[RMDB]
RNA sequence: GGGAACGACUCGAGUAGAGUCGAAAAGGGGGUUCUUGUUAAAAAGACACAAUGAGAGAGAUUGUGUCUAAAGAUAGAUCUUAAAGGAAAAUAAACUCUCAAAAGAAGAAAGAACAAUAAGAACCCACUGAUUGGUUGCGUUCGCGUAAUCAGUCAGAAAAGAAACAACAACAACAAC
Reactivity to 2A3 in 0.01 (KOAc 150mM, MgCl2 10mM, bicine 150mM(pH8.5), 24C), signal-to-noise 9, nucleotides 027 to 126: g150g000g000g010g000u000u000c000u010u010g020u010u030a100a090a030a010a000g010a000c010a000c000a000a010u110g030a060g020a020g000a000g010a250u000u000g000u000g000u000c010u010a020a010a000g040a030u150a030g100a050u010c010u040u070a100a090a050g100g040a060a110a050a020u190a050a090a050c030u020c000u010c070a110a160a010a010g060a050a010g040a040a100a020g060a060a020c040a060a020u020a030a000g000a000a000c000c000c000a010
Reactivity to DMS in 0.01 (KOAc 150mM, MgCl2 10mM, bicine 150mM(pH8.5), 24C), signal-to-noise 9, nucleotides 027 to 126: g010g000g010g010g010u000u000c000u000u000g010u000u010a040a080a100a100a030g010a010c000a000c000a000a010u000g010a170g020a180g010a160g000a070u000u000g010u000g010u000c000u000a020a040a090g010a160u020a140g000a090u010c010u000u000a060a160a180g010g000a040a060a100a120u030a090a080a120c120u000c020u000c030a040a090a040a050g000a050a060g000a100a090a090g010a090a070c120a030a010u000a010a010g000a020a010c000c000c000a110